[RMDB]
RNA sequence: GGGAACGACUCGAGUAGAGUCGAAAAGUGAAGGUGGUGCGACGCUUAUCAAUGACCCGUCACUGAUUGAUCGUGCAGAAAUUAUCCGCGAGAAAGGCACUAACCGCAGCCAGUUCUUCCGUGGUCAACAACUAGCCCCUUUCGAGGGGCUAGUUGUAAAAGAAACAACAACAACAAC
Reactivity to DMS in 0.01 (KOAc 150mM, MgCl2 10mM, bicine 150mM(pH8.5), 24C), signal-to-noise 1, nucleotides 027 to 126: g000u040g060a030a150g000g000u000g010g000u010g000c010g030a140c060g020c080u010u010a050u000c080a060a040u010g000a150c080c060c050g050u000c030a080c040u010g000a050u000u010g000a040u000c070g010u010g000c060a090g000a100a070a140u000u010a180u000c030c020g040c030g050a120g010a050a030a070g020g000c010a040c020u020a010a070c100c060g040c130a160g020c050c070a120g000u000u000c020u000u000c030c020g030u010g010g000u000c170a000
Chemical mapping of a 177-nucleotide RNA with DMS. It was measured as part of the RMDB library OK2TRN. Reactivities are given for positions 27 through 126. DMS adducts were read by reverse transcription with MarathonRT. The RNA was probed in 150 mM KOAc, 10 mM MgCl2 and 150 mM bicine (pH 8.5) at 24 C.